[RMDB]
RNA sequence: GGGAACGACUCGAGUAGAGUCGAAAAGUAUCUUCUGUCUGCCGGUAUCGGGGGUCAACUCCAAAACUUCACCCCCCAAGUGACCUACGAGGGUGAUUUCGUUGUCCUCUCUAUCCAAACUGGUCGCUGCCUGUUACGUAUUCGUACGUAACAGGCAAAAAGAAACAACAACAACAAC
Reactivity to DMS in 0.01 (KOAc 150mM, MgCl2 10mM, bicine 150mM(pH8.5), 24C), signal-to-noise 2, nucleotides 027 to 126: g000u000a060u000c030u010u000c030u000g010u000c050u000g010c000c070g000g000u000a090u010c100g000g020g000g000g010u000c110a060a080c060u010c100c140a040a070a080a070c090u000u020c060a160c000c010c000c000c010c020a100a100g000u000g000a030c030c010u000a100c240g000a060g000g000g030u000g040a020u000u010u010c190g020u020u000g020u010c000c000u000c020u000c000u000a150u010c090c120a070a140a120c260u000g000g010u000c020g030c040
Reactivity to 2A3 in 0.01 (KOAc 150mM, MgCl2 10mM, bicine 150mM(pH8.5), 24C), signal-to-noise 1, nucleotides 027 to 126: g020u040a070u110c010u060u000c050u060g160u010c040u080g100c050c020g000g010u050a040u150c080g000g020g000g020g050u010c040a020a010c000u110c050c070a000a040a090a090c040u110u080c070a080c000c000c040c000c000c020a090a000g020u020g060a020c000c000u040a040c070g010a020g020g020g000u060g030a010u030u170u260c140g120u190u170g040u070c010c000u000c010u050c030u060a120u100c000c030a120a040a000c040u020g000g000u050c030g000c020